Record summary: This 207-nucleotide RNA was probed chemically with 2A3. It was measured as part of the RMDB library OK3TST. The RNA was probed in 150 mM KOAc, 10 mM MgCl2 and 150 mM bicine (pH 8.5) at 24 C.

[RMDB]
RNA sequence: GGGAACGACUCGAGUAGAGUCGAAAAAAGCGAGCUGACAUAUCAAGUUCAAAUCUUCAAUGGUUCAACUUGGAGCUCAUCUGUUACAACUGGUAAGGGUGUAACAAGUUAUUCUUACAAUACAUCCAAUAUGGCUGAAACUUCUAGUGCACAAGUCGCUUAACGCAUACUUCGGUAUGCGUUAAGCAAAAGAAACAACAACAACAAC
Reactivity to 2A3 in 0.01 (KOAc 150mM, MgCl2 10mM, bicine 150mM(pH8.5), 24C), signal-to-noise 2, nucleotides 027 to 156: a000a000g160c110g030a020g000c000u030g040a050c040a120u170a010u100c030a050a030g010u010u060c100a000a040a060u100c120u300u240c110a180a300u300g000g040u040u040c010a000a000c000u000u000g000g000a010g000c040u000c010a020u010c000u030g050u030u030a030c010a100a080c120u010g000g060u220a100a170g070g010g080u000g000u000a020a000c000a010a010g030u050u070a070u200u030c010u010u070a010c040a000a000u060a050c000a070u000c010c000a040a060u070a080u160g050g020c000u060g030a050a030a070c010u080u060c020u070a010g010u060g040c030a020c060a160a060g030u060c080